[RMDB]
RNA sequence: GGGAACGACUCGAGUAGAGUCGAAAACUGGAAAGACCGGGAUGAAUUGUUAGCCUGGGAAAGGGCAGUAGGCUGGGAAGCGAUUGUCACUGAAGCGUUGGGCGAGACGUGGGACCAGGCGCGUAAGAAUCCAAAUGCUUUACUCACCCCUGGCUCACAAGAUGCCUAAAUUCGUUUAGGCAUCUUGAAAAGAAACAACAACAACAAC
Reactivity to DMS in 0.01 (KOAc 150mM, MgCl2 10mM, bicine 150mM(pH8.5), 24C), signal-to-noise 2, nucleotides 027 to 156: c020u020g010g010a060a120a130g000a060c070c030g060g000g020a120u000g040a060a120u000u000g010u010u000a090g010c060c010u020g010g020g000a080a060a070g040g000g050c040a070g000u000a060g040g000c000u010g020g020g010a100a060g040c020g000a110u000u010g020u000c050a080c070u030g020a110a140g030c000g020u000u000g030g030g030c070g020a170g020a060c060g000u000g000g010g000a110c020c020a060g000g020c090g030c010g010u000a040a110g010a170a100u000c020c070a080a130a140u000g010c010u000u000u000a210c050u000c060a100c020c010c000c000u000g020g000c000u010c060a230
Reactivity to 2A3 in 0.01 (KOAc 150mM, MgCl2 10mM, bicine 150mM(pH8.5), 24C), signal-to-noise 3, nucleotides 027 to 156: c030u040g030g030a110a020a020g050a060c030c080g050g020g020a060u070g030a070a130u160u070g040u090u120a010g030c020c020u030g030g000g030a070a100a070g030g030g000c030a020g010u070a040g110g030c020u030g000g040g020a040a010g030c020g050a060u000u140g020u030c040a010c210u040g040a030a010g020c010g050u050u020g030g020g030c060g020a060g010a030c020g000u020g010g010g020a040c000c020a010g040g020c000g000c000g010u040a070a050g010a070a030u020c010c000a040a080a060u110g000c000u030u070u040a080c020u050c050a040c000c030c010c010u030g030g020c020u030c020a030
This 207-nucleotide RNA was probed chemically with DMS and 2A3. 2A3 adducts were read by reverse transcription with SuperScript II with manganese. The DMS profile rests on 3,021 reads. The RNA was probed in 150 mM KOAc, 10 mM MgCl2 and 150 mM bicine (pH 8.5) at 24 C.